Notes:
An RNA of 207 nucleotides, treated with 2A3 and DMS and read out base by base. Reactivities are given for positions 27 through 156. For 2A3 the reverse transcriptase was SuperScript II with manganese. DMS adducts were read by reverse transcription with MarathonRT. 2A3 is a SHAPE reagent: it acylates the 2'-hydroxyl of flexible nucleotides of all four kinds.
RNA sequence: GGGAACGACUCGAGUAGAGUCGAAAAGAAAUUCCCGAUCGGCGGUAAAGUCCGCGAGCCGAACGGAAAAGGUUUGGCAGGAACCGGUGAGAUUCCGGUACCGACAGUAUAGUCUGGAUGGAAGAAGGUAGCCUCCUCUCGUUCGCGAGAGGAGGAAGUUACUUAAUUACUUCGGUAAUUAAGUAACAAAAGAAACAACAACAACAAC
Reactivity to 2A3 in 0.01 (KOAc 150mM, MgCl2 10mM, bicine 150mM(pH8.5), 24C), signal-to-noise 1, nucleotides 027 to 156: g020a010a050a000u020u020c010c010c030g000a170u110c030g000g000c010g000g020u010a020a000a000g000u000c000c000g000c000g000a020g000c000c000g020a010a020c010g040g220a100a090a150a130g090g000u000u000u000g010g010c000a000g020g000a000a000c000c020g010g000u010g000a020g000a010u000u000c000c010g000g000u000a010c000c000g000a000c000a000g010u020a060u090a160g070u000c060u090g100g060a090u120g040g080a100a120g030a050a030g150g030u070a040g080c010c000u000c000c000u000c000u010c000g030u110u020c230g020c040g170a030g000a020g010g040a000g000g000a000a000
Reactivity to DMS in 0.01 (KOAc 150mM, MgCl2 10mM, bicine 150mM(pH8.5), 24C), signal-to-noise 3, nucleotides 027 to 156: g010a050a090a200u000u000c000c000c000g020a040u010c010g010g020c010g000g020u000a100a170a060g000u010c020c000g010c000g000a300g000c000c000g010a040a120c020g020g020a160a130a190a210g000g020u010u010u010g020g000c020a080g010g010a040a040c010c000g000g040u000g010a280g000a300u010u000c000c000g020g030u000a020c000c010g010a080c050a130g010u000a130u000a090g000u010c050u000g010g000a100u000g000g000a060a130g020a100a070g010g010u000a120g010c000c000u000c020c010u000c000u000c000g010u010u010c270g000c010g020a020g000a030g020g000a000g000g000a010a000